The record gives the reactivity of an RNA of 177 nucleotides to DMS. For DMS the reverse transcriptase was MarathonRT. For DMS, 982 sequencing reads were counted.
[RMDB]
RNA sequence: GGGAACGACUCGAGUAGAGUCGAAAAUUGUGGUCAAGACCAUGGCGUAGUAUCCAAGGUUGUCAAGGUUCCUAUUGACUUAACAAUGAUUGAGUUUAUGUUAUGGUGUAAGGAUGGACAGGGGAAACAAUCUCACGAGCUUCGGCUCGUGAGAUUGAAAAGAAACAACAACAACAAC
Reactivity to DMS in 0.01 (KOAc 150mM, MgCl2 10mM, bicine 150mM(pH8.5), 24C), signal-to-noise 1, nucleotides 027 to 126: u000u000g000u020g010g000u000c010a210a090g000a060c020c000a020u010g000g020c070g020u010a050g010u020a060u000c040c040a050a080g000g040u000u000g010u000c020a050a030g030g010u000u000c050c140u000a140u020u010g000a040c000u000u000a020a030c020a050a040u000g000a210u000u000g020a060g020u000u000u000a070u020g010u010u000a040u000g000g010u010g000u000a040a100g010g010a100u000g000g040a030c060a060g020g020g000g010a160a050a150